[RMDB]
RNA sequence: GGGAACGACUCGAGUAGAGUCGAAAAGUACAGCUCUCCAGUGGAUAUGAGGGGCUAGAGCAAUCCUGUGAUAUAUGCAUGGGGGCUGUUUCUCCUCAGCAGCUGCCAUAGCCCGGUCACUGAUACACCGUAGCAAGACAUUCGUGUCUUGCUACGGAAAAGAAACAACAACAACAAC
Reactivity to 2A3 in 0.01 (KOAc 150mM, MgCl2 10mM, bicine 150mM(pH8.5), 24C), signal-to-noise 4, nucleotides 027 to 126: g090u070a030c040a050g000c010u010c010u050c070c000a040g010u010g100g020a060u080a150u270g080a080g020g020g030g000c000u020a010g000a030g140c030a030a120u080c000c000u020g020u040g040a020u040a100u100a040u300g130c040a030u010g000g000g000g000g000c000u000g060u020u020u050c020u010c000c000u020c020a020g000c000a000g010c020u040g040c060c010a080u040a020g000c000c050c000g010g000u030c020a010c010u040g020a050u070a130c110a020
Reactivity to DMS in 0.01 (KOAc 150mM, MgCl2 10mM, bicine 150mM(pH8.5), 24C), signal-to-noise 2, nucleotides 027 to 126: g000u000a090c100a070g010c000u040c040u000c040c000a000g050u000g000g020a050u000a110u000g000a070g000g020g000g000c020u000a010g000a300g000c060a060a070u030c000c050u000g050u070g000a070u080a070u010a060u050g030c010a000u000g000g020g000g060g030c000u000g000u000u000u000c010u010c030c040u000c060a140g000c040a080g010c110u000g000c100c030a090u010a070g000c020c090c010g040g000u000c050a090c050u030g010a120u010a160c150a180